The record gives the reactivity of an RNA of 177 nucleotides to DMS and 2A3. The data come from the RNA Mapping Database (RMDB), library OK2TRN. The RNA was probed in 150 mM KOAc, 10 mM MgCl2 and 150 mM bicine (pH 8.5) at 24 C. The 2A3 profile rests on 1,272 reads.
RNA sequence: GGGAACGACUCGAGUAGAGUCGAAAAACGAUCUGCUGCUCAGCCCCGAGCGUCGGCGCGCCCUGUUCAUGAUCGACGUGGACCAUUUUAAGCAGAUCAACGACGCGCUCGGACACCAUGUCGGCGAAUUUGCUGCAACAUUCGUGUUGCAGCAAAUAAAAGAAACAACAACAACAAC
Reactivity to DMS in 0.01 (KOAc 150mM, MgCl2 10mM, bicine 150mM(pH8.5), 24C), signal-to-noise 2, nucleotides 027 to 126: a080c150g010a010u000c020u000g000c000u000g020c110u000c110a150g010c090c060c040c070g000a050g000c020g000u010c010g040g010c080g020c160g010c050c040c060u020g000u030u010c090a090u000g030a050u000c020g050a020c060g020u000g000g010a120c090c070a130u000u000u010u010a090a080g000c030a020g000a040u010c000a100a090c130g010a080c070g010c050g020c000u020c040g020g020a080c060a130c020c030a040u010g010u000c010g010g020c050g020a150
Reactivity to 2A3 in 0.01 (KOAc 150mM, MgCl2 10mM, bicine 150mM(pH8.5), 24C), signal-to-noise 1, nucleotides 027 to 126: a000c020g000a010u010c000u000g020c010u030g000c010u040c160a080g130c050c010c020c000g010a010g010c010g060u100c060g020g000c040g000c020g010c030c030c030u060g000u110u140c100a110u140g060a300u070c020g010a020c010g040u020g000g000a090c080c020a150u000u170u090u160a020a000g000c020a000g020a000u000c020a000a040c060g050a020c000g000c000g000c020u010c030g010g030a050c020a020c120c000a030u060g000u000c000g020g000c000g050a060